[RMDB]
RNA sequence: GGGAACGACUCGAGUAGAGUCGAAAAUCGAUCGAUGUCGACGUACAGCAACACCACGGCACCGACGAAGCACAGUGCCGAGAGCGUGAACCAAAGCGGGACCAUCGGUGCUUAGCCUAUCCGCUGGCGAUUAGGCAAUAUUCGUAUUGCCUAAUCGAAAAGAAACAACAACAACAAC
Reactivity to 2A3 in 0.01 (KOAc 150mM, MgCl2 10mM, bicine 150mM(pH8.5), 24C), signal-to-noise 9, nucleotides 027 to 126: u070c020g060a050u020c020g040a040u110g040u050c020g030a120c030g050u110a060c030a080g050c050a090a060c020a010c060c020a040c010g000g010c010a000c010c010g090a090c060g040a060a010g050c080a050c030a090g030u020g030c000c010g020a020g010a010g030c110g020u040g050a040a040c030c020a100a070a020g040c020g010g010g020a030c030c020a040u040c020g010g000u030g010c030u120u110a040g010c010c010u060a100u060c010c020g010c030u020g040g010
Reactivity to DMS in 0.01 (KOAc 150mM, MgCl2 10mM, bicine 150mM(pH8.5), 24C), signal-to-noise 8, nucleotides 027 to 126: u020c020g020a070u020c070g020a070u010g000u000c020g010a110c130g000u030a080c120a100g020c150a090a130c070a040c060c090a200c020g010g000c020a020c010c020g000a080c090g000a110a120g000c130a110c130a070g000u000g000c010c000g000a050g000a090g010c110g010u010g000a090a120c130c040a040a070a060g000c040g010g000g000a120c050c040a100u010c030g000g010u000g000c030u020u020a090g000c020c010u000a070u020c020c010g010c010u010g000g010